The data come from the RNA Mapping Database (RMDB), library 15KREP. Chemical mapping of a 177-nucleotide RNA with DMS. For DMS the reverse transcriptase was MarathonRT.
RNA sequence: GGGAACGACUCGAGUAGAGUCGAAAACGGACUGGCUCAUCUUCGGAGUGGGGGCGGCGGCGUCUGGUCUCUUAUUUCUUCCUUCUGAGAAGAGGAGACAGCUUGCCGCUCGCCCCCAGACCCGAGAGAUUAAAUUGAGGUUCGCCUCAAUUUAAUCAAAAGAAACAACAACAACAAC
Reactivity to DMS in 0.01 (KOAc 150mM, MgCl2 10mM, bicine 150mM(pH8.5), 24C), signal-to-noise 1, nucleotides 027 to 126: c080g010g020a080c100u000g020g010c020u000c060a150u000c070u000u020c040g000g010a160g040u000g000g020g010g010g020c000g000g010c000g020g020c010g020u000c020u000g000g020u000c000u000c010u010u000a150u000u010u000c000u000u000c040c040u000u000c210u010g000a110g010a020a000g000a040g000g000a010g000a030c000a010g000c140u000u000g010c000c010g010c010u010c040g020c000c020c000c010c000a010g010a060c090c000c000g000a060g000a150

Conditions: 150 mM KOAc, 10 mM MgCl2 and 150 mM bicine (pH 8.5), 24 C.